[RMDB]
RNA sequence: GGGAACGACUCGAGUAGAGUCGAAAACACGCGGUGACCGGACGCGGUGGCCUGUCGUGCCGGCAGAAACUGCGGAGCAUGGUGACCGGUACACAAUGAUAAUCUCAUCACAGCAACAGGUCGAUCUACUUAAUGUGGUGUUCGCACCACAUUAAGUAAAAGAAACAACAACAACAAC
Reactivity to 2A3 in 0.01 (KOAc 150mM, MgCl2 10mM, bicine 150mM(pH8.5), 24C), signal-to-noise 9, nucleotides 027 to 126: c090a010c020g080c020g030g010u040g050a060c000c000g010g030a040c010g000c010g020g040u020g020g030c010c010u020g010u030c050g030u060g060c050c030g040g000c010a010g100a090a150a020c040u020g000c010g050g010a050g030c050a080u100g010g030u030g040a070c030c000g000g040u130a050c060a000c010a030a120u100g040a040u060a110a120u070c030u010c040a070u050c020a030c010a070g070c020a020a040c000a020g010g030u010c010g010a070u030c010u040
Reactivity to DMS in 0.01 (KOAc 150mM, MgCl2 10mM, bicine 150mM(pH8.5), 24C), signal-to-noise 3, nucleotides 027 to 126: c110a120c050g010c030g040g010u010g000a100c010c020g020g010a190c000g020c010g000g030u050g020g020c100c000u000g000u010c030g030u030g010c030c060g000g020c050a060g010a090a170a070c100u030g010c000g000g010a120g010c040a070u050g010g040u030g000a070c020c010g010g010u010a060c060a110c110a110a050u000g020a040u010a090a100u000c100u000c020a060u000c070a050c090a100g010c120a070a050c050a010g000g010u000c010g010a080u020c120u000